[RMDB]
This 177-nucleotide RNA was probed chemically with 2A3 and DMS. Values cover nucleotides 27 to 126. For 2A3, 1,850 sequencing reads were counted.
RNA sequence: GGGAACGACUCGAGUAGAGUCGAAAAACUCCUUGAUGCUCAGGCCGGUGCGGUUUGUCGAGAAAGGCGAAUAGGAACAGUCCAUGAAAGUGUGGAUCACUGGGGCUGGCGGAAUGAUGGGGUCACAUGCCUAUAAGCAAUUCGUUGCUUAUAGGCAAAAAGAAACAACAACAACAAC
Reactivity to 2A3 in 0.01 (KOAc 150mM, MgCl2 10mM, bicine 150mM(pH8.5), 24C), signal-to-noise 2, nucleotides 027 to 126: a000c030u010c020c000u020u030g070a050u090g020c020u020c130a050g050g030c020c000g030g050u110g060c040g040g020u030u050u060g040u010c040g020a050g130a290a090a000g060g000c060g010a080a060u060a100g090g010a080a030c020a030g020u000c020c000a010u070g130a280a240a100g120u160g000u080g110g060a110u180c030a010c050u040g110g000g000g000c000u000g000g000c030g030g080a030a050u080g040a060u110g020g020g000g040u060c070a050c010a160
Reactivity to DMS in 0.01 (KOAc 150mM, MgCl2 10mM, bicine 150mM(pH8.5), 24C), signal-to-noise 4, nucleotides 027 to 126: a090c110u010c020c020u010u010g010a150u000g030c030u010c070a060g010g010c030c030g000g010u000g010c070g020g000u000u010u020g020u000c030g010a140g020a040a100a150g000g010c040g000a060a070u010a070g030g000a100a120c200a070g000u010c010c020a070u010g010a110a070a090g020u000g030u000g010g020a090u010c050a030c020u010g010g010g000g020c020u000g000g000c050g020g000a080a060u000g010a090u000g000g010g000g010u000c090a080c180a120